[RMDB]
RNA sequence: GGGAACGACUCGAGUAGAGUCGAAAAAUGGCGCAUGCAUGGGGAACUACAUCUGUGUCGCGAGUUCGAUUCUCGCCAGGGCCUGGUCCUGUAGCUCAGUUGGUAGAGCAAGCUGUUCCCCGGACACAAAAUCCAGCUAGGUUCGCCUAGCUGGAAAGUUAGCAUGUCUGUUCGCAGACAUGCUAACAAAAGAAACAACAACAACAAC
Reactivity to 2A3 in 0.01 (KOAc 150mM, MgCl2 10mM, bicine 150mM(pH8.5), 24C), signal-to-noise 2, nucleotides 027 to 156: a000u080g070g000c050g030c090a030u100g010c020a070u130g010g000g000g000a030a030c020u070a040c130a110u050c020u000g060u030g090u140c010g000c000g010a010g010u010u020c010g010a010u020u000c010u010c020g020c020c000a000g010g010g000c000c210u150g110g030u050c020c010u010g010u030a000g000c000u000c000a090g020u190u100g100g110u160a010g010a000g020c000a010a010g020c080u040g000u010u000c000c000c010c000g010g000a000c020a000c040a040a130a000a030u000c020c000a000g000c000u000a010g000g000u020u050c100g060c100c000u000a000g000c000u000g010g000a000a000a000
Reactivity to DMS in 0.01 (KOAc 150mM, MgCl2 10mM, bicine 150mM(pH8.5), 24C), signal-to-noise 2, nucleotides 027 to 156: a140u000g000g010c040g000c050a040u000g010c030a110u000g030g020g020g020a040a050c000u010a000c080a050u010c060u000g030u000g010u000c010g010c000g010a110g000u010u000c030g000a300u000u000c000u000c010g030c040c010a010g060g000g000c000c090u020g050g000u010c000c020u000g010u000a050g030c020u000c010a080g000u000u000g050g080u000a080g020a060g070c010a090a120g000c110u000g000u000u000c000c000c030c030g000g000a190c070a140c050a040a050a120a110u000c010c010a000g000c000u000a010g000g000u000u000c280g000c010c000u000a020g000c000u000g000g000a000a000a030